[RMDB]
RNA sequence: GGGAACGACUCGAGUAGAGUCGAAAACGCAGGAAGGUAGCUGAGCCAGUCAGUGGUAAUACUGGUGUAAGCGUGUAGGGCGUGACCUAGGCAAAUCCGGGUCACAUUCAGCCUGAGACGUGAUGCGAAUUGCCCAGAUAUUCGUAUCUGGGCAAUUAAAAGAAACAACAACAACAAC
Reactivity to 2A3 in 0.01 (KOAc 150mM, MgCl2 10mM, bicine 150mM(pH8.5), 24C), signal-to-noise 6, nucleotides 027 to 126: c050g010c030a050g060g040a110a020g070g050u100a030g010c010u000g020a010g040c010c000a000g020u030c010a010g050u070g140g010u190a070a050u050a150c010u000g030g010u040g050u090a010a030g010c000g010u030g000u020a000g000g000g010c010g000u000g000a010c010c000u080a300g010g000c180a150a120a030u130c000c000g020g000g000u040c000a000c000a000u160u160c020a020g010c000c000u050g000a050g020a010c010g010u060g040a050u270g020c000g020
Reactivity to DMS in 0.01 (KOAc 150mM, MgCl2 10mM, bicine 150mM(pH8.5), 24C), signal-to-noise 9, nucleotides 027 to 126: c060g000c060a050g010g020a090a050g000g010u020a130g000c000u000g000a230g000c030c010a010g000u000c100a080g020u030g030g000u020a090a080u020a030c000u010g000g010u000g020u030a140a210g000c010g010u010g010u000a300g000g010g010c030g010u000g010a000c000c000u000a100g030g000c270a070a120a120u050c010c000g000g000g000u000c010a010c010a070u010u040c280a200g000c000c000u000g010a170g010a030c030g000u000g000a070u010g010c080g010

Structure probing data (2A3 and DMS) for a 177-nucleotide construct. DMS adducts were read by reverse transcription with MarathonRT. It was measured as part of the RMDB libraries RFM100 and RFMREP.